[RMDB]
RNA sequence: GGGAACGACUCGAGUAGAGUCGAAAAGAUAUGGAAAUUCCCUUCUUUUGACGGCUCGUACUCGGAAACGAGUAUGGAGCCGAUAAGAAGGAAUUUCCUAAGUCAAAAGAAGGACUUCGGUCCUUCACGACUAAAAUGUGUUCGCACAUUUUAGUCGAAAAGAAACAACAACAACAAC
Reactivity to 2A3 in 0.01 (KOAc 150mM, MgCl2 10mM, bicine 150mM(pH8.5), 24C), signal-to-noise 2, nucleotides 027 to 126: g000a020u050a010u130g000g020a010a040a000u000u020c080c060c040u020u000c050u060u140u120u170g300a220c150g020g000c010u000c000g000u000a010c000u000c000g000g040a050a030a020c010g000a000g000u010a010u040g150g030a000g000c010c000g000a000u010a010a010g020a000a000g000g020a000a010u000u010u010c000c000u020a080a030g040u000c030a010a040a040a260g020a000a000g010g000a000c020u110u150c300g080g000u010c040c050u000u000c000a010
Reactivity to DMS in 0.01 (KOAc 150mM, MgCl2 10mM, bicine 150mM(pH8.5), 24C), signal-to-noise 3, nucleotides 027 to 126: g010a050u000a300u010g010g010a040a010a020u000u000c140c060c050u000u000c000u010u010u010u000g010a230c160g030g000c000u010c000g000u000a000c000u000c000g020g000a070a090a130c000g020a010g010u000a010u000g050g000a030g020c000c000g000a010u010a010a020g010a010a000g000g000a030a010u000u000u000c000c000u010a020a110g000u000c020a080a110a140a140g010a020a020g000g010a030c000u000u010c250g030g000u000c000c000u000u000c010a150
Conditions: 150 mM KOAc, 10 mM MgCl2 and 150 mM bicine (pH 8.5), 24 C. Structure probing data (2A3 and DMS) for a 177-nucleotide construct. Values cover nucleotides 27 to 126. It was measured as part of the RMDB library TTRDES. For DMS, 3,522 sequencing reads were counted. DMS adducts were read by reverse transcription with MarathonRT.